[RMDB]
RNA sequence: GGGAACGACUCGAGUAGAGUCGAAAAUGCCAGCCAACGACGGAAGGCGGGCAGAUCAACUUCAUGGAUGGAACCGAGUCCAUCCCAGCCCGGACGGAAGCAAGACAGAUAUCCAGACUUGGCGUCGCCCUCGGAAACGAUUCGUCGUUUCCGAGGGAAAAGAAACAACAACAACAAC
Reactivity to DMS in 0.01 (KOAc 150mM, MgCl2 10mM, bicine 150mM(pH8.5), 24C), signal-to-noise 1, nucleotides 027 to 126: u000g020c010c000a150g020c050c000a020a220c060g000a200c090g010g000a040a260g000g000c020g010g100g030c030a100g030a080u010c130a090a070c170u000u000c100a110u000g010g000a020u000g020g000a120a200c050c120g000a090g000u000c000c060a160u010c000c010c110a190g000c060c000c000g000g010a090c060g000g000a160a090g000c110a050a090g000a130c180a050g000a110u000a110u000c070c010a010g030a110c190u000u000g010g040c070g010u000c080g010
Reactivity to 2A3 in 0.01 (KOAc 150mM, MgCl2 10mM, bicine 150mM(pH8.5), 24C), signal-to-noise 2, nucleotides 027 to 126: u080g020c020c020a020g000c020c010a080a020c050g150a000c030g010g020a060a000g030g000c010g010g000g000c030a020g030a100u130c070a050a100c070u240u150c040a050u160g010g000a010u000g020g010a080a080c150c120g090a140g130u000c010c010a000u010c000c050c000a020g010c020c000c000g000g050a050c050g040g040a060a010g070c060a100a000g140a060c030a040g090a090u110a040u120c030c030a000g080a160c010u040u020g050g020c020g060u050c080g060
The data come from the RNA Mapping Database (RMDB), library OK2TRN. Chemical mapping of a 177-nucleotide RNA with DMS and 2A3. For 2A3, 1,367 sequencing reads were counted. The DMS profile rests on 557 reads. The reactions ran in a buffer of 150 mM KOAc, 10 mM MgCl2 and 150 mM bicine (pH 8.5), at 24 C.